[RMDB]
RNA sequence: GGGAACGACUCGAGUAGAGUCGAAAACCUAGCAGGGAACCAAGCCUACCCAUCCCUUCUAGAAGCCCAAGAAGAUGUCCUCCUGCUAGACGCGCAGGCCCAGGCUAAGGACUCAGAAGAUGCAGCCUGAUAUUCGGGAAUUCGUUCCCGAAUAUCAAAAAGAAACAACAACAACAAC
Reactivity to DMS in 0.01 (KOAc 150mM, MgCl2 10mM, bicine 150mM(pH8.5), 24C), signal-to-noise 3, nucleotides 027 to 126: c130c010u000a010g010c050a060g010g000g010a050a080c110c120a100a110g000c030c050u000a110c050c030c050a190u000c010c020c010u000u000c040u000a040g000a110a110g010c010c020c010a090a100g010a090a110g010a100u000g010u000c040c020u000c000c000u000g010c000u000a070g020a090c170g000c150g000c060a030g000g010c130c060c050a060g010g000c090u010a070a080g000g010a060c030u000c050a030g000a090a080g010a090u000g010c090a050g010c060c060
Reactivity to 2A3 in 0.01 (KOAc 150mM, MgCl2 10mM, bicine 150mM(pH8.5), 24C), signal-to-noise 1, nucleotides 027 to 126: c010c000u010a020g030c040a000g040g030g000a030a010c100c020a150a040g090c000c010u060a090c070c020c000a080u040c010c000c020u000u020c010u030a010g010a100a050g050c030c000c000a020a040g130a070a010g080a060u110g020u010c000c000u030c000c000u010g010c020u050a050g040a210c090g040c010g000c070a010g020g000c020c020c010a000g020g000c000u020a060a060g000g010a020c020u000c050a080g040a100a000g070a050u050g010c030a010g030c020c010

Overview: An RNA of 177 nucleotides, treated with DMS and 2A3 and read out base by base. For DMS, 1,994 sequencing reads were counted. Source: RMDB library OK2TRN, as collected in RNAgym. The reactions ran in a buffer of 150 mM KOAc, 10 mM MgCl2 and 150 mM bicine (pH 8.5), at 24 C. For DMS the reverse transcriptase was MarathonRT.